[RMDB]
RNA sequence: GGGAACGACUCGAGUAGAGUCGAAAAGAUAUGGAUCUCCAUAAAGUCGAAAUUGAACAACAGCUCCACCCGUCGGAAACGACGGUUGGAGACAUGUUCUGUUUCGACUUUAUGGAGAUCCUAAGUCCACUAGUGCAUGGUUCGCCAUGCACUAGUGAAAAGAAACAACAACAACAAC
Reactivity to DMS in 0.01 (KOAc 150mM, MgCl2 10mM, bicine 150mM(pH8.5), 24C), signal-to-noise 2, nucleotides 027 to 126: g020a080u010a300u000g000g010a000u000c000u000c000c000a000u000a010a010a040g000u000c000g010a010a010a010u010u010g000a010a000c000a010a100c300a240g000c000u010c000c000a030c060c000c000g000u000c000g000g000a080a100a210c010g000a010c000g010g010u010u000g000g000a010g000a000c110a090u000g000u000u000c000u000g000u000u000u000c000g000a000c010u000u000u000a000u000g000g020a010g000a000u000c000c000u000a040a130g000u000c030

Source information:
The data come from the RNA Mapping Database (RMDB), library TTRINS. Structure probing data (DMS) for a 177-nucleotide construct. For DMS, 2,269 sequencing reads were counted.